[RMDB]
RNA sequence: GGGAACGACUCGAGUAGAGUCGAAAAGAGCAGCAGCGUGCGGCCCAGCGCAUUGUCAGAUACCUUCGCGAAUAUCUUGAAGUCCAAUACGACCGAGGCAAGGAUCGGUACCUCGCGGCAUUGCACAACUCCUUUUGUGGUUCGCCACAAAAGGAGUAAAAGAAACAACAACAACAAC
Reactivity to DMS in 0.01 (KOAc 150mM, MgCl2 10mM, bicine 150mM(pH8.5), 24C), signal-to-noise 2, nucleotides 027 to 126: g010a160g000c040a050g040c030a080g000c100g020u000g020c100g000g000c000c060c020a150g020c040g020c040a040u000u010g020u020c060a050g030a050u000a120c070c000u000u000c140g000c070g000a090a050u020a040u010c050u000u000g000a100a110g000u000c080c090a010a100u000a050c100g010a100c060c020g010a050g000g020c040a130a160g040g000a070u030c040g020g020u000a110c090c050u000c020g030c010g000g000c090a060u020u000g010c080a070c100a060
Reactivity to 2A3 in 0.01 (KOAc 150mM, MgCl2 10mM, bicine 150mM(pH8.5), 24C), signal-to-noise 1, nucleotides 027 to 126: g030a010g000c010a000g040c010a000g010c000g040u000g000c050g040g000c000c010c020a000g000c030g010c050a070u040u140g010u010c030a010g020a090u080a120c000c060u060u070c050g010c000g090a110a050u100a040u100c040u070u060g040a070a000g010u020c020c030a090a020u160a110c060g030a030c000c030g000a010g040g030c000a030a040g050g000a120u060c030g000g040u030a040c000c000u030c030g030c020g020g010c040a080u000u120g000c040a030c030a080